[RMDB]
Record summary:
An RNA of 177 nucleotides, treated with 2A3 and DMS and read out base by base.
RNA sequence: GGGAACGACUCGAGUAGAGUCGAAAAGCACGUCCGGCAAGACCCGUGCGAACACUUGAGCUCCGGGUUGGCCGCUCUUGUGGAUUAGGACGUUCUAGCUCCGGCUUGGCCGCUAGUUCGUCCGAAAGAUUAAUAGGCACUUCGGUGCCUAUUAAUCAAAAGAAACAACAACAACAAC
Reactivity to 2A3 in 0.01 (KOAc 150mM, MgCl2 10mM, bicine 150mM(pH8.5), 24C), signal-to-noise 8, nucleotides 027 to 126: g030c010a000c030g030u040c040c010g010g010c030a070a050g040a100c010c000c000g000u040g000c010g050a150a020c080a030c140u090u160g070a030g020c020u040c090c040g070g040g010u060u070g060g010c020c010g010c010u020c010u030u060g040u030g040g080a120u050u110a080g010g000a000c010g000u000u000c000u000a000g000c030u070c120c020g130g070c140u160u290g130g010c010c010g000c020u000a000g000u000u000c000g000u000c000c000g000a000a010a000
Reactivity to DMS in 0.01 (KOAc 150mM, MgCl2 10mM, bicine 150mM(pH8.5), 24C), signal-to-noise 4, nucleotides 027 to 126: g000c000a030c010g000u010c200c030g010g010c070a120a090g010a120c060c020c020g000u030g000c040g010a120a120c130a090c100u020u010g010a110g000c020u020c120c010g010g000g020u010u000g000g010c100c080g000c030u010c030u000u000g010u010g000g000a190u030u020a100g000g000a010c000g020u010u010c000u010a000g000c050u020c130c040g000g000c110u020u030g000g030c060c130g000c010u000a010g000u000u000c000g020u000c000c000g000a020a030a100
The DMS profile rests on 10,331 reads. DMS adducts were read by reverse transcription with MarathonRT. The RNA was probed in 150 mM KOAc, 10 mM MgCl2 and 150 mM bicine (pH 8.5) at 24 C.